[RMDB]
RNA sequence: GGGAACGACUCGAGUAGAGUCGAAAAUACGACCUUUACCACAACGACGCUGUCCAUAGAUCAAAUUAUUUCGUGGAUUGGAUUUCACUUGACUGUCUACGGUUCCAUUGCGUGUGCUCGGGGUAGAGUCUUAGAUGAGCUUCGGCUCAUCUAAGACAAAAGAAACAACAACAACAAC
Reactivity to 2A3 in 0.01 (KOAc 150mM, MgCl2 10mM, bicine 150mM(pH8.5), 24C), signal-to-noise 8, nucleotides 027 to 126: u190a010c070g060a070c020c000u050u050u040a060c020c010a030c000a110a030c070g090a010c050g010c050u030g030u000c010c000a030u050a060g050a070u110c090a030a050a080u230u140a130u080u190u080c050g010u020g040g030a040u020u120g070g050a110u040u080u090c040a060c040u070u130g080a050c030u060g020u050c020u030a040c030g020g000u060u000c040c020a030u060u090g020c050g020u060g030u060g030c010u030c030g030g000g010g000u030a050g010a030
Reactivity to DMS in 0.01 (KOAc 150mM, MgCl2 10mM, bicine 150mM(pH8.5), 24C), signal-to-noise 2, nucleotides 027 to 126: u020a080c100g010a090c090c000u000u020u050a130c000c010a020c120a080a100c150g000a040c070g020c010u000g020u000c010c000a050u000a080g030a080u010c130a060a030a080u020u020a070u040u010u020c060g000u010g010g000a080u020u010g000g000a060u000u020u020c080a050c050u010u000g040a130c030u010g000u030c010u020a040c080g000g000u000u000c050c040a050u030u010g030c050g040u000g040u000g010c010u000c040g010g000g000g050u000a050g000a140